[RMDB]
RNA sequence: GGGAACGACUCGAGUAGAGUCGAAAAGGAUCCUUCGUAGUCAGGGUAACUGCCUCCUGUACAGUUACCAGUGAAGACUAGUCAAGGUGUCAUCGUACAGGAGGAUGACGUCUUGAAUUAAGGAUCGCUACAAGUUAGUAUUCGUACUAACUUGUAGAAAAGAAACAACAACAACAAC
Reactivity to 2A3 in 0.01 (KOAc 150mM, MgCl2 10mM, bicine 150mM(pH8.5), 24C), signal-to-noise 6, nucleotides 027 to 126: g030g000a000u000c000c000u010u030c070g080u020a010g010u000c020a020g070g000g000u000a000a000c000u010g010c000c030u090c010c020u060g060u110a020c000a000g000u000u000a000c000c020a010g030u030g120a200a030g010a010c000u010a010g040u010c000a010a000g000g000u000g000u000c000a010u000c010g070u090a060c040a100g030g040a030g110g000a010u000g000a000c010g000u010c000u000u010g000a010a000u050u050a020a000g000g000a000u000c000g000
Reactivity to DMS in 0.01 (KOAc 150mM, MgCl2 10mM, bicine 150mM(pH8.5), 24C), signal-to-noise 9, nucleotides 027 to 126: g010g000a000u000c000c000u000u000c210g010u000a020g020u000c000a170g010g000g010u000a010a020c010u000g010c110c060u010c140c060u000g010u010a240c000a010g000u000u000a010c000c000a130g010u000g010a110a130g000a020c020u000a100g000u000c010a010a010g010g000u000g000u000c010a010u000c010g020u010a140c180a100g000g010a100g010g000a000u000g000a010c020g000u000c000u000u000g000a030a070u000u010a040a010g020g000a010u000c000g000
Structure probing data (2A3 and DMS) for a 177-nucleotide construct. For 2A3, 54,084 sequencing reads were counted. Conditions: 150 mM KOAc, 10 mM MgCl2 and 150 mM bicine (pH 8.5), 24 C. High 2A3 reactivity points to a flexible backbone, as in loops and unpaired stretches. It was measured as part of the RMDB library OK2TRN.